[RMDB]
RNA sequence: GGGAACGACUCGAGUAGAGUCGAAAAUAGUGUAAAGCACUUGGAAAUUUAAUGACUAACAGGGACUGUUCUAUGGAAGACUGACUUGAAAUGUGAUAAAUCUCUGCCAUUGUUACUUUCACUUGCCCAAACUGUUCUCCUUAAGAUGCAAAUAUAAUAUGUGAAGCUUUUUCGAAAGCUUCACAUAAAAAGAAACAACAACAACAAC
Reactivity to 2A3 in 0.01 (KOAc 150mM, MgCl2 10mM, bicine 150mM(pH8.5), 24C), signal-to-noise 2, nucleotides 027 to 156: u040a000g010u010g010u070a080a070a010g050c010a020c010u010u010g030g050a030a080a050u100u190u090a110a070u110g020a020c070u020a110a000c030a060g000g020g050a040c010u070g020u090u050c030u090a150u120g000g080a020a020g010a020c040u060g000a000c020u040u030g030a070a080a060u100g020u010g010a010u040a090a070a070u050c020u000c030u030g030c040c020a020u060u030g040u070u050a080c020u050u100u020c010a030c020u020u060g010c040c000c000a060a080a010c010u020g000u020u020c020u020c000c040u070u080a040a040g040a020u200g170c000a010a040a210u300a050u300a130a070
Reactivity to DMS in 0.01 (KOAc 150mM, MgCl2 10mM, bicine 150mM(pH8.5), 24C), signal-to-noise 1, nucleotides 027 to 156: u000a000g010u000g010u000a030a060a060g010c020a020c040u010u010g010g000a170a080a120u020u000u000a090a060u000g010a120c080u000a030a090c040a040g000g040g010a140c050u000g020u010u000c030u000a150u020g020g000a160a030g010a120c020u010g010a160c020u020u000g010a090a130a100u010g000u000g010a150u010a010a040a050u000c030u010c030u000g050c060c010a130u000u000g030u000u000a010c050u010u000u000c010a040c030u000u010g000c020c000c020a070a070a120c050u000g010u000u000c000u010c030c010u000u010a030a110g000a140u010g000c030a040a080a080u010a070u000a060a260
Structure probing data (2A3 and DMS) for a 207-nucleotide construct. For DMS the reverse transcriptase was MarathonRT. The data come from the RNA Mapping Database (RMDB), library OK3TST. Reactivities are given for positions 27 through 156. 2A3 adducts were read by reverse transcription with SuperScript II with manganese. The DMS profile rests on 2,343 reads. The reactions ran in a buffer of 150 mM KOAc, 10 mM MgCl2 and 150 mM bicine (pH 8.5), at 24 C.